[RMDB]
RNA sequence: GGGAACGACUCGAGUAGAGUCGAAAAGCGUACUACGUUGUAAAGACGCAGAGCCGUUGAUCUAUGCUCCCAAAUAGGAGCAUAGGGAGGCUCUGAACUACGUUGAAGAAGACGUAUCGCAAACCCUUGGAUAGAAGUUCGCUUCUAUCCAAGGGAACACGGUCAGUUAGUUCGCUAACUGACCGUGAAAAGAAACAACAACAACAAC
Reactivity to 2A3 in 0.01 (KOAc 150mM, MgCl2 10mM, bicine 150mM(pH8.5), 24C), signal-to-noise 3, nucleotides 027 to 156: g020c010g010u050a090c040u000a000c050g000u010u030g030u060a000a000a000g000a020c000g000c020a000g000a010g000c010c000g110u220u010g000a000u000c000u010a000u000g000c000u030c000c020c020a180a300a050u300a110g000g000a000g020c000a000u000a000g010g010g000a000g000g000c000u000c020u010g020a000a000c000u110a060c000g020u010u020g020a140a140g020a000a010g010a050c000g010u010a030u300c030g000c040a050a060a230c000c000c000u000u010g000g000a000u000a010g000a000a000g010u020u170c180g090c180u000u030c000u000a000u030c000c000a000a000g010g000g000a000a010
Reactivity to DMS in 0.01 (KOAc 150mM, MgCl2 10mM, bicine 150mM(pH8.5), 24C), signal-to-noise 1, nucleotides 027 to 156: g000c000g050u000a070c070u010a000c000g030u030u000g010u030a030a300a300g000a010c030g050c010a010g000a040g010c050c020g000u000u000g000a030u010c000u000a000u000g000c000u000c010c000c010a100a110a300u000a070g030g010a040g000c000a000u000a000g000g000g030a000g050g030c000u000c010u000g020a030a100c030u030a030c000g040u000u000g000a080a130g070a300a300g000a000c000g000u000a010u000c010g070c080a100a030a220c000c000c000u030u010g000g000a040u000a030g000a000a040g000u000u000c300g070c000u030u000c000u020a000u000c000c000a000a010g020g000g010a050a000